[RMDB]
RNA sequence: GGGAACGACUCGAGUAGAGUCGAAAAAGUACGUACGCGUACAACCGAUACCAUGAUGAUAACAUAGUUCAGCAGACUUAACUCUGAUGAACAAUCAUGUCUUUCGCUCCUAUCUGAUGUAUCUGAAAGCCAUGCUACCGUUCGCGGUAGCAUGGCUAAAAGAAACAACAACAACAAC
Reactivity to 2A3 in 0.01 (KOAc 150mM, MgCl2 10mM, bicine 150mM(pH8.5), 24C), signal-to-noise 1, nucleotides 027 to 126: a000g020u020a000c000g000u000a010c300g000c000g130u010a000c060a100a040c060c000g000a000u000a050c070c010a010u010g010a000u020g030a000u040a200a000c020a010u040a090g000u000u000c000a000g000c040a000g000a000c060u060u160a070a100c000u030c000u040g000a000u000g000a040a000c010a020a070u020c000a000u030g030u000c170u050u060u000c000g040c030u030c000c000u090a160u230c100u100g100a120u000g050u120a000u000c010u020g080a110a020
The record gives the reactivity of an RNA of 177 nucleotides to 2A3. Values are in units of 0.01, from 0 to 300, in steps of 10. The reactions ran in a buffer of 150 mM KOAc, 10 mM MgCl2 and 150 mM bicine (pH 8.5), at 24 C. Reactivities are given for positions 27 through 126.